[RMDB]
RNA sequence: GGGAACGACUCGAGUAGAGUCGAAAAGCACGUGGGUUCAGAUGAUGGGCCCGCAUCUGUACGAAAGUGAGACGAAAGUCCAGCCCACGUGCAUGAGCACGCGGGCCCCGUGCUCGCCAGCAAAAGAAGGUAGUGCGAUCUUCGGAUCGCACUACCUAAAAGAAACAACAACAACAAC
Reactivity to 2A3 in 0.01 (KOAc 150mM, MgCl2 10mM, bicine 150mM(pH8.5), 24C), signal-to-noise 1, nucleotides 027 to 126: g000c000a000c030g020u000g000g010g010u050u050c020a000g000a000u000g010a010u000g010g000g000c000c000c000g020c000a000u020c000u000g090u060a140c060g100a030a000a200g100u110g020a170g000a130c060g100a100a000a050g000u000c000c020a020g000c000c000c010a000c060g000u000g000c000a000u030g060a000g020c020a000c020g000c110g020g050g000c000c000c010c000g000u000g000c000u000c000g020c000c000a090g050c140a060a090a140a040g300a130
An RNA of 177 nucleotides, treated with 2A3 and read out base by base. For 2A3, 498 sequencing reads were counted. High 2A3 reactivity points to a flexible backbone, as in loops and unpaired stretches.